[RMDB]
RNA sequence: GGGAACGACUCGAGUAGAGUCGAAAAUGCUAAUGAGGAAGAGGUGCAUUGUGGGGUGAUGAUAAUAUUUUGAAAUUAGACAGUGGUGAUGAUUGCUCUGUUAGAUACAUUCACUCAAUGUACUAAACCUAGUGAAUUGUAUGCUAUAAAAGAGUGAGAUCAAACAGACAUUCGUGUCUGUUUGAUCAAAAGAAACAACAACAACAAC
Reactivity to DMS in 0.01 (KOAc 150mM, MgCl2 10mM, bicine 150mM(pH8.5), 24C), signal-to-noise 2, nucleotides 027 to 156: u010g040c070u000a110a080u000g000a100g000g000a140a080g000a140g020g050u010g020c040a110u000u000g030u010g000g000g020g030u010g010a070u000g010a100u000a080a130u010a090u000u010u030u000g000a090a050a180u000u030a120g000a060c050a070g050u000g000g020u010g010a090u000g020a070u000u000g000c020u020c070u000g010u000u000a050g000a080u000a020c000a060u000u000c040a020c010u000c090a080a080u000g020u000a300c140u000a050a080a090c080c060u010a040g010u000g000a040a040u010u000g020u000a000u000g020c040u010a090u000a050a050a080a100g010a080g030u010g000a120
Reactivity to 2A3 in 0.01 (KOAc 150mM, MgCl2 10mM, bicine 150mM(pH8.5), 24C), signal-to-noise 6, nucleotides 027 to 156: u060g010c030u070a030a030u140g010a040g070g010a040a010g030a040g050g020u030g020c040a050u080u060g020u060g050g030g000g020u040g030a030u030g040a010u020a190a050u070a190u080u140u060u110g040a040a050a060u050u010a050g030a060c040a030g020u030g040g050u030g030a050u060g020a060u020u140g000c010u000c000u000g040u070u030a000g000a010u020a000c000a010u010u020c010a010c010u010c040a030a120u110g030u140a120c050u170a090a140a050c020c020u020a010g010u000g000a010a000u040u030g000u010a010u060g170c020u030a040u070a160a120a030a010g030a010g020u050g010a040
Chemical mapping of a 207-nucleotide RNA with DMS and 2A3. Source: RMDB library OK3TST, as collected in RNAgym. For 2A3 the reverse transcriptase was SuperScript II with manganese. Values are in units of 0.01, from 0 to 300, in steps of 10.